[RMDB]
RNA sequence: GGGAACGACUCGAGUAGAGUCGAAAAAAUCAUUGCCAAGGCUCUUGUUGAAGUUAAAGCAUAGUGAAAAAUGGGCCUAUAGAUUAGAUAUCUUUUAAUAAAGCAAUGUGAAGGAAUUGAAGUUGUUUGAAUAUCUCCCUCGUUUCGCUACAUGCAAUAAAGUUUAGGAAUUCGUUCCUAAACUUUAAAAAGAAACAACAACAACAAC
Reactivity to DMS in 0.01 (KOAc 150mM, MgCl2 10mM, bicine 150mM(pH8.5), 24C), signal-to-noise 1, nucleotides 027 to 156: a120a110u000c010a040u000u000g000c000c020a180a060g000g010c000u000c020u000u000g010u010u010g030a100a210g020u010u000a030a090a240g030c080a030u000a080g050u010g000a030a050a110a090a140u010g010g010g040c000c020u000a120u000a050g010a080u010u020a220g000a190u000a070u020c020u000u000u000u000a050a170u030a150a050a070g020c010a040a010u000g040u010g010a110a070g020g040a090a140u010u010g010a040a250g000u000u000g000u010u010u040g020a130a090u000a070u010c040u000c000c020c000u000c030g030u000u020u000c010g010c080u000a050c090a040u010g040c020a080a180
This 207-nucleotide RNA was probed chemically with DMS. The DMS profile rests on 2,014 reads. Conditions: 150 mM KOAc, 10 mM MgCl2 and 150 mM bicine (pH 8.5), 24 C. The data come from the RNA Mapping Database (RMDB), library OK3TST.